[RMDB]
RNA sequence: GGGAACGACUCGAGUAGAGUCGAAAACAACUUAAUCAACUAUCAGCAUAUCAGCCUGGUUUAUCUCCAAGGGCAUUGAAAGAAAAGUAUGGCAUUGAAGGAGAUUUAUAUAAACUUGCAUCAAAUGCUGCAUCAGUUUUUUCGAAAACUGAUGCAGAAAAGAAACAACAACAACAAC
Reactivity to 2A3 in 0.01 (KOAc 150mM, MgCl2 10mM, bicine 150mM(pH8.5), 24C), signal-to-noise 4, nucleotides 027 to 126: c030a030a020c050u140u300a040a050u210c070a030a060c060u170a100u190c030a000g050c010a040u060a070u250c050a010g030c020c000u030g020g020u050u040u020a050u010c000u000c010c080a050a080g010g010g040c050a050u110u200g070a120a140a060g150a020a060a020a000g180u110a050u070g060g000c080a070u010u140g070a090a040g030g000a010g010a010u000u180u030a160u010a020u030a000a050a030c050u060u080g050c070a070u050c050a100a060a120u190g030
Reactivity to DMS in 0.01 (KOAc 150mM, MgCl2 10mM, bicine 150mM(pH8.5), 24C), signal-to-noise 2, nucleotides 027 to 126: c150a130a120c140u020u000a020a100u000c060a100a180c080u040a050u000c060a040g000c140a060u010a050u010c020a240g010c060c000u000g000g000u010u000u000a090u020c100u000c020c020a050a130g020g010g000c000a040u040u050g000a080a080a160g030a020a120a100a060g050u020a090u010g000g000c010a060u010u010g000a000a110g000g040a070g000a010u000u000u010a070u010a040u020a120a080a030c150u010u000g020c170a100u000c120a080a040a120u010g000
The data come from the RNA Mapping Database (RMDB), library OK1LIB. Structure probing data (2A3 and DMS) for a 177-nucleotide construct. The RNA was probed in 150 mM KOAc, 10 mM MgCl2 and 150 mM bicine (pH 8.5) at 24 C. The DMS profile rests on 1,967 reads. For 2A3 the reverse transcriptase was SuperScript II with manganese.